[RMDB]
RNA sequence: GGGAACGACUCGAGUAGAGUCGAAAAGAUAUGGACUAUACCCGUGCUGCGAAGUGGAUCGGAAACGAUCCAUGGAGCACAGGGUGAUAGUCCUAAGUCAAAAGUUGAUCGGUUCGCCGAUCAACAAGCUGCAAAAUCUGUUCGCAGAUUUUGCAGCAAAAGAAACAACAACAACAAC
Reactivity to 2A3 in 0.01 (KOAc 150mM, MgCl2 10mM, bicine 150mM(pH8.5), 24C), signal-to-noise 1, nucleotides 027 to 126: g040a010u120a020u250g000g000a000c010u040a030u030a080c020c010c040g150u190g130c300u150g080c050g010a060a000g010u030g020g000a000u010c000g000g060a090a080a140c020g020a000u010c020c000a010u030g000g000a020g000c030a020c000a020g090g010g000u140g040a000u010a000g000u000c000c000u010a070a010g020u020c010a000a020a040a300g010u000u030g010a020u010c020g040g060u030u020c240g050c100c000g050a000u000c000a000a000c010a000a020
Reactivity to DMS in 0.01 (KOAc 150mM, MgCl2 10mM, bicine 150mM(pH8.5), 24C), signal-to-noise 1, nucleotides 027 to 126: g010a040u000a300u000g030g000a000c020u010a080u000a040c000c030c000g030u010g070c200u040g010c080g020a300a290g000u000g030g000a020u000c000g000g000a140a080a170c000g010a040u000c040c000a000u010g000g000a300g000c000a050c040a080g000g000g040u000g050a010u010a000g000u000c000c000u000a000a150g000u000c020a050a070a120a220g030u000u000g000a000u000c000g030g010u010u000c300g060c020c000g000a020u000c000a010a000c020a030a030
Record summary
Source: RMDB library TTRDES, as collected in RNAgym. An RNA of 177 nucleotides, treated with 2A3 and DMS and read out base by base. The 2A3 profile rests on 1,451 reads. The DMS profile rests on 700 reads. The RNA was probed in 150 mM KOAc, 10 mM MgCl2 and 150 mM bicine (pH 8.5) at 24 C.